[RMDB]
RNA sequence: GGGAACGACUCGAGUAGAGUCGAAAAGAUAUGGACCCACGGAGCUGUGAUCGGAAACGAUCAUACAGCGCCGGUGAAAUACGUGGUCCUAAGUCAAAAGUACCCCUCUCUUCGGAGAGGGGUACAACGUAGAAUCUACCUUCGGGUAGAUUCUACGAAAAGAAACAACAACAACAAC
Reactivity to 2A3 in 0.01 (KOAc 150mM, MgCl2 10mM, bicine 150mM(pH8.5), 24C), signal-to-noise 1, nucleotides 027 to 126: g000a010u040a060u190g020g010a000c000c030c010a000c000g010g020a020g010c020u000g000u010g010a000u010c010g020g040a040a090a060c010g000a000u030c010a020u240a050c020a000g000c000g000c010c030g040g110u150g060a110a160a040u300a100c140g000u290g000g010u000c010c010u000a190a040g130u030c050a100a000a000a100g000u000a000c030c000c010c000u020c010u010c000u000u100c300g030g000a030g010a000g050g030g010g000u000a000c000a000a010
Reactivity to DMS in 0.01 (KOAc 150mM, MgCl2 10mM, bicine 150mM(pH8.5), 24C), signal-to-noise 2, nucleotides 027 to 126: g000a040u000a300u010g030g000a030c020c000c010a050c000g000g000a010g030c000u000g010u010g020a020u010c000g010g010a140a080a150c030g010a020u000c010a050u000a150c050a000g010c010g000c010c000g000g030u010g000a080a080a060u010a060c290g020u030g030g000u000c000c000u000a010a040g020u000c080a110a080a070a090g000u000a010c000c010c000c000u010c000u010c010u000u010c200g010g000a030g000a020g000g010g000g010u000a000c000a010a040